[RMDB]
RNA sequence: GGGAACGACUCGAGUAGAGUCGAAAAGGAUUGUGUGUUUAUCCUGGCUGGUUACUCACACUUGAUUCAAUCAAAAAACAUGAAAGUACGGUUGGUGAGCUCACACCCGAGAUUCAGCAGGGUUGCCAGAAGCCAGAGUAUUCGUACUCUGGCUUCUAAAAGAAACAACAACAACAAC
Reactivity to DMS in 0.01 (KOAc 150mM, MgCl2 10mM, bicine 150mM(pH8.5), 24C), signal-to-noise 1, nucleotides 027 to 126: g040g030a160u000u000g010u000g000u000g000u000u010u000a050u010c010c020u020g030g050c090u010g000g020u010u000a060c040u010c010a040c050a090c090u000u010g010a050u000u010c110a020a120u030c060a010a040a160a030a090a100c100a110u000g000a060a080a150g030u010a090c060g020g010u000u000g030g030u010g000a080g020c030u020c060a060c100a110c050c050c010g000a070g020a190u010u000c100a070g020c070a080g000g010g010u010u000g000c080c090